[RMDB]
RNA sequence: GGGAACGACUCGAGUAGAGUCGAAAACAGCAAAAAGGAACCGAUUCCCACCAAGUUCGGAAAGAGAUACCGGGCGAGGCGCUGAAGAAAGAAUCUCGCUUCAGACACCCCAAGCACUCGACUGAAGAAUGCACGCCAUCGUUCGCGAUGGCGUGAAGAUAAAGUAUAACUUCGGUUAUACUUUAUCAAAAGAAACAACAACAACAAC
Reactivity to DMS in 0.01 (KOAc 150mM, MgCl2 10mM, bicine 150mM(pH8.5), 24C), signal-to-noise 1, nucleotides 027 to 156: c020a230g040c040a030a080a130a180a170g000g000a040a110c070c040g000a150u010u000c000c010c020a160c040c010a120a260g000u010u020c070g000g020a070a030a100g000a140g000a160u010a030c040c020g040g000g040c040g020a090g000g010c040g040c050u000g000a080a040g010a170a070a080g000a160a110u010c080u000c080g020c070u000u000c000a020g010a190c060a170c050c000c020c020a070a180g000c000a090c040u000c050g040a110c010u000g020a070a040g020a050a080u000g030c000a000c110g000c000c010a000u000c000g020u000u020c300g010c070g010a010u010g030g030c000g040u000g020a010a040
Reactivity to 2A3 in 0.01 (KOAc 150mM, MgCl2 10mM, bicine 150mM(pH8.5), 24C), signal-to-noise 3, nucleotides 027 to 156: c020a010g060c010a030a050a090a050a060g140g040a090a040c080c050g060a130u020u010c040c000c010a020c000c040a050a030g020u030u010c020g000g030a080a080a020g090a030g030a020u050a080c000c030g010g020g000c020g000a040g010g020c080g010c060u040g030a020a010g020a050a170a020g070a070a100u020c050u030c130g010c000u030u000c010a040g040a080c020a100c050c030c000c020a050a020g040c010a030c080u080c040g120a060c060u080g000a010a020g070a060a070u130g030c010a000c000g000c000c000a000u010c000g030u060u050c180g000c000g130a000u000g000g010c000g000u000g000a000a010

Background: An RNA of 207 nucleotides, treated with DMS and 2A3 and read out base by base. The RNA was probed in 150 mM KOAc, 10 mM MgCl2 and 150 mM bicine (pH 8.5) at 24 C.